[RMDB]
RNA sequence: GGGAACGACUCGAGUAGAGUCGAAAAACAGGAUGUACGAUAAACGCUGGCGAGACCUCCUCGGAGACCUCGGAAUAGGAGAGAAAGCAGAAGGCUUUCUACCGUUGGUAUGCUGUCGUGCAGCGUAGGUCCUCCUAUUAUUCGUAAUAGGAGGACCAAAAGAAACAACAACAACAAC
Reactivity to DMS in 0.01 (KOAc 150mM, MgCl2 10mM, bicine 150mM(pH8.5), 24C), signal-to-noise 3, nucleotides 027 to 126: a130c100a060g000g000a070u000g010u000a030c010g030a080u030a030a080a060c050g030c000u000g050g020c000g010a040g020a090c180c010u000c010c010u010c210g040g000a060g000a080c070c020u000c020g020g040a120a050u040a060g000g010a130g010a000g000a000a020a020g020c000a260g020a140a100g010g000c010u000u000u000c000u020a110c000c010g010u030u000g010g010u000a050u070g020c070u000g030u010c020g050u000g000c030a000g020c040g000u010a080
Reactivity to 2A3 in 0.01 (KOAc 150mM, MgCl2 10mM, bicine 150mM(pH8.5), 24C), signal-to-noise 8, nucleotides 027 to 126: a000c060a030g130g040a150u030g010u060a020c020g010a020u030a050a120a020c010g010c010u010g040g000c010g010a080g040a130c010c000u020c010c000u020c040g060g020a090g070a130c010c040u060c060g020g050a160a090u170a160g050g020a070g000a000g010a050a000a000g000c030a020g160a300a020g300g000c000u000u000u000c000u020a030c010c010g010u040u050g020g000u040a040u300g020c030u020g020u050c010g000u040g050c000a010g010c030g030u020a060
Chemical mapping of a 177-nucleotide RNA with DMS and 2A3. Source: RMDB library OK1LIB, as collected in RNAgym. 2A3 adducts were read by reverse transcription with SuperScript II with manganese. Values cover nucleotides 27 to 126.